[RMDB]
RNA sequence: GGGAACGACUCGAGUAGAGUCGAAAAGAUAUGGAGGUCCGCCAGAGAGCAACGGCUCGAUGAAACUAUUCGGAAACGAAUAGUGGAGAGCCCAAAACAACACUGCUCUCUGGGGACCUCCUAAGUCCUUAUCCUUUUUGUUCGCAAAAAGGAUAAGAAAAGAAACAACAACAACAAC
Reactivity to DMS in 0.01 (KOAc 150mM, MgCl2 10mM, bicine 150mM(pH8.5), 24C), signal-to-noise 2, nucleotides 027 to 126: g010a080u000a300u000g040g010a010g020g000u000c000c000g000c020c000a020g000a040g000a030g030c000a070a160c230g000g010c000u000c020g030a110u050g000a250a150a040c000u000a000u000u010c000g010g000a210a100a260c020g020a020a020u000a000g040u000g000g010a020g040a040g020c010c030c300a010a070a120a140c230a070a070c170a120c270u000g000c000u000c000u000c000u000g020g000g000g000a000c010c000u000c000c000u000a010a080g020u000c030
The record gives the reactivity of an RNA of 177 nucleotides to DMS.
The data come from the RNA Mapping Database (RMDB), library TTRINS.
DMS adducts were read by reverse transcription with MarathonRT.
The RNA was probed in 150 mM KOAc, 10 mM MgCl2 and 150 mM bicine (pH 8.5) at 24 C.